[RMDB]
RNA sequence: GGGAACGACUCGAGUAGAGUCGAAAAUUGGGCAUCCUGCUGAUGUCGUGGCAGUUGCGUCGAUAGAGGAUAUGGAGAAGGCUAUCAGAAUGGGCUUCGUAGACCCGGAUAGUGUCAAGCUGAUAGCAGGUCCAACUCGAUUCGUCGAGUUGGACCUAAAAGAAACAACAACAACAAC
Reactivity to 2A3 in 0.01 (KOAc 150mM, MgCl2 10mM, bicine 150mM(pH8.5), 24C), signal-to-noise 1, nucleotides 027 to 126: u070u020g040g030g000c010a020u010c020c040u020g030c020u060g000a120u020g030u070c030g020u080g050g070c020a020g140u200u180g060c000g130u060c020g020a030u020a060g060a030g100g000a020u070a100u300g060g000a040g030a180a000g070g030c000u000a020u020c000a010g040a020a070u090g030g000g000c040u080u000c100g080u070a050g010a100c000c000c030g040g000a120u110a120g040u090g090u120c020a010a040g050c010u010g030a020u010a000g010c000
Reactivity to DMS in 0.01 (KOAc 150mM, MgCl2 10mM, bicine 150mM(pH8.5), 24C), signal-to-noise 2, nucleotides 027 to 126: u000u000g030g000g050c060a110u000c080c070u020g040c020u000g010a130u000g010u010c060g000u000g010g050c040a220g010u020u030g010c040g010u000c030g020a050u020a080g000a250g030g040a080u000a040u010g020g000a060g030a180a150g010g000c010u000a020u000c000a080g000a060a090u000g000g000g010c030u000u000c110g000u000a100g010a170c070c060c020g000g010a070u020a050g050u000g020u010c100a060a090g000c020u030g000a100u010a010g010c060